[RMDB]
RNA sequence: GGGAACGACUCGAGUAGAGUCGAAAACUUUGCUAAUACAGGCAGUGUUUGCUACACUCCUAUAGAUGAGAUACCCUAUAAGAGUUUCUCUGAUAGUGGUUGCAUUCUUCCAUCUGAGUGCACUAUGAAAGGGAGAGGUUCGCCUCUCCCAAAAGAAACAACAACAACAAC
Reactivity to 2A3 in 0.01 (KOAc 150mM, MgCl2 10mM, bicine 150mM(pH8.5), 24C), signal-to-noise 5, nucleotides 027 to 129: c020u070u040u190g010c040u030a110a090u110a200c040a070g000g070c030a000g000u020g010u000u040u170g020c000u050a020c000a000c020u000c000c020u050a050u040a040g080a030u070g000a030g000a050u100a070c010c000c000u070a080u100a190a080g060a020g030u040u130u000c040u000c010u020g080a010u090a050g110u130g040g050u120u090g000c000a010u010u040c000u080u060c130c030a160u030c080u070g000a010g040u040g000c060a030c050u050a040u080g060a090a020a060
Reactivity to DMS in 0.01 (KOAc 150mM, MgCl2 10mM, bicine 150mM(pH8.5), 24C), signal-to-noise 5, nucleotides 027 to 129: c040u000u060u000g040c060u020a010a010u060a080c180a120g040g040c080a030g040u060g000u010u010u050g010c050u060a070c050a000c050u000c010c040u020a090u070a060g000a130u040g020a110g000a090u000a090c050c040c010u020a070u050a090a040g000a100g030u000u000u000c020u010c040u000g020a060u020a090g020u030g000g030u040u040g010c070a030u000u000c030u020u010c080c100a070u050c100u000g020a020g100u000g020c040a040c110u010a050u090g040a050a130a000
This 170-nucleotide RNA was probed chemically with 2A3 and DMS. Values cover nucleotides 27 to 129. It was measured as part of the RMDB library 15KLIB.